[RMDB]
Chemical mapping of a 177-nucleotide RNA with DMS. It was measured as part of the RMDB library OK2TST.
RNA sequence: GGGAACGACUCGAGUAGAGUCGAAAAGGUACCUCAGGGGCUUAUCGUUGGUGGCAUCUGAAGAUAGCCAGGGAACUGGAGGAUGGCGCAGGCGAGGCCUUCUCGACGGUCUCCACUGGGUAGGGUGAAUUUAGUUGCGUUUCGACGCAACUAAAUUAAAAGAAACAACAACAACAAC
Reactivity to DMS in 0.01 (KOAc 150mM, MgCl2 10mM, bicine 150mM(pH8.5), 24C), signal-to-noise 1, nucleotides 027 to 126: g040g000u020a070c060c010u000c050a090g000g000g010g030c040u000u010a080u010c040g020u010u030g020g020u000g020g020c020a010u000c010u010g020a080a110g010a130u020a070g010c000c010a030g000g000g020a150a210c050u000g020g000a160g020g000a030u000g000g030c030g040c050a040g000g000c020g000a020g020g000c000c020u000u000c020u010c110g020a120c130g020g000u000c060u000c000c030a060c090u000g010g000g020u000a050g000g000g020u010g020